[RMDB]
RNA sequence: GGGAACGACUCGAGUAGAGUCGAAAAAAAGAUAUGGAGAGAGUGCCAGCUGAUGGGACCGAAGAACGAGCUCGGAAACGAGCUCGGGAGGUCCCUACCAGCGGUAAUUCUCUCUCCUAAGUCAAAACAUUUUAAGAUUCUUCGGAAUCUUAAAAUGAAAAGAAACAACAACAACAAC
Reactivity to DMS in 0.01 (KOAc 150mM, MgCl2 10mM, bicine 150mM(pH8.5), 24C), signal-to-noise 1, nucleotides 027 to 126: a030a090a110g010a020u010a300u010g000g040a020g030a040g010a000g050u010g030c010c000a190g060c010u020g020a040u000g000g040g000a000c010c000g000a110a170g040a100a230c040g000a000g000c000u020c000g010g000a110a110a250c010g000a040g040c010u000c000g010g000g010a070g000g010u000c000c000c000u000a010c070c010a020g020c000g000g000u000a030a050u010u010c010u000c000u000c010u000c000c020u000a030a140g020u010c020a170a080a160a220
Structure probing data (DMS) for a 177-nucleotide construct. Reactivities are given for positions 27 through 126. It was measured as part of the RMDB library TTRDES.